[RMDB]
RNA sequence: GGGAACGACUCGAGUAGAGUCGAAAAGAACGUCUUGAAAUGUCCAUCACGCCGGCCCAAACGAAGCAUUACCGAUGACUUCACACUGACCAGUCCCUACCUGGGGUUCUGCCAGUAUUGCAGACACAUCCACGUCAUCAUUCGUGAUGACGUGGAUAAAAGAAACAACAACAACAAC
Reactivity to DMS in 0.01 (KOAc 150mM, MgCl2 10mM, bicine 150mM(pH8.5), 24C), signal-to-noise 1, nucleotides 027 to 126: g010a070a120c160g030u020c030u020u010g000a090a110a080u000g030u000c000c030a050u010c050a030c010g000c070c010g000g030c030c050c010a050a000a080c110g000a090a050g010c060a010u010u020a120c160c120g000a140u010g000a090c000u030u000c000a070c180a050c030u010g010a100c100c050a140g000u020c000c030c010u000a060c180c130u000g030g010g000g000u000u030c050u000g010c060c000a010g010u000a110u010u010g010c000a000g000a040c120a090c220
Reactivity to 2A3 in 0.01 (KOAc 150mM, MgCl2 10mM, bicine 150mM(pH8.5), 24C), signal-to-noise 1, nucleotides 027 to 126: g000a070a040c130g040u010c060u120u150g060a080a080a060u060g010u010c030c000a090u070c030a010c050g010c000c000g010g000c000c020c000a070a060a010c060g090a020a000g000c000a040u050u040a110c010c050g090a060u050g080a150c000u030u030c020a030c000a030c110u040g020a020c010c000a000g050u050c000c000c050u020a190c020c000u020g000g010g060g050u010u120c010u020g000c000c010a010g060u110a080u040u210g030c030a000g010a050c020a010c010
Structure probing data (DMS and 2A3) for a 177-nucleotide construct. Reactivities are given for positions 27 through 126. For 2A3 the reverse transcriptase was SuperScript II with manganese. For DMS the reverse transcriptase was MarathonRT.